[RMDB]
RNA sequence: GGGAACGACUCGAGUAGAGUCGAAAAAAACAGGUAGGAAAACAAUACUCGCAAACGACUACGAGUACGCAUUAGCCGCUUAGUCGGCUAACGUUCUUUCUGAUUUUUCCUGUCGGAUCAGAGGGGGCGUAAUUUCAGGCAGGAUAGUCCUAACCUUUAACUCUCUAAACUUCGGUUUAGAGAGUUAAAAAGAAACAACAACAACAAC
Reactivity to 2A3 in 0.01 (KOAc 150mM, MgCl2 10mM, bicine 150mM(pH8.5), 24C), signal-to-noise 2, nucleotides 027 to 156: a010a000a000c120a030g050g020u080a030g070g030a020a040a050a010c060a060a150u050a040c000u020c010g010c040a040a040a300c070g080a030c090u080a030c000g010a010g000u030a030c160g030c050a030u030u020a000g000c000c010g000c120u130u070a020g100u300c000g010g000c000u000a000a000c030g000u010u020c010u000u000u000c000u000g010a010u000u000u000u000u000c000c000u000g010u010c000g000g000a020u010c000a020g010a010g020g050g000g000g050c020g030u070a040a050u030u180u160c030a000g030g000c000a000g000g000a000u030a020g020u000c000c030u060a030a110c030c000u060u040